[RMDB]
RNA sequence: GGGAACGACUCGAGUAGAGUCGAAAAUGUGUCUCCUUCGGGAGACACAAACGCUCGCAGCCCGAGGCCGCACGGGCAACGCAGCGGCCAGCCAGCGAGCUAUGUGUUAUCAAUUCGUUGAUAACAAAAUGUAUAUCAUCUUCGGAUGAUAUACAUUAAAAGAAACAACAACAACAAC
Reactivity to DMS in 0.01 (KOAc 150mM, MgCl2 10mM, bicine 150mM(pH8.5), 24C), signal-to-noise 9, nucleotides 027 to 126: u000g010u000g000u000c000u000c000c000u000u010c190g020g010g010a010g010a000c000a000c000a010a060a080c230g010c000u000c010g020c010a150g000c010c030c030g010a090g000g010c010c000g040c010a250c040g000g010g020c240a060a060c020g020c080a100g010c000g010g010c000c010a060g000c070c090a200g000c010g000a010g010c010u000a010u010g020u000g000u000u000a000u000c000a010a040u000u010c180g020u000u000g000a010u000a000a010c000a040a040
Reactivity to 2A3 in 0.01 (KOAc 150mM, MgCl2 10mM, bicine 150mM(pH8.5), 24C), signal-to-noise 6, nucleotides 027 to 126: u050g000u000g000u000c000u010c010c010u020u090c180g090g000g000a000g000a000c000a000c000a000a000a000c020g000c000u010c000g000c010a010g020c000c010c010g050a060g000g010c000c000g040c010a030c040g050g140g040c070a060a080c030g030c070a120g010c010g000g000c000c000a000g020c020c020a010g010c010g000a000g000c000u050a120u120g130u010g000u000u000a010u010c010a020a020u060u070c180g050u090u010g000a010u000a010a000c000a020a100
Conditions: 150 mM KOAc, 10 mM MgCl2 and 150 mM bicine (pH 8.5), 24 C. An RNA of 177 nucleotides, treated with DMS and 2A3 and read out base by base. It was measured as part of the RMDB library M2PK50. Values cover nucleotides 27 to 126.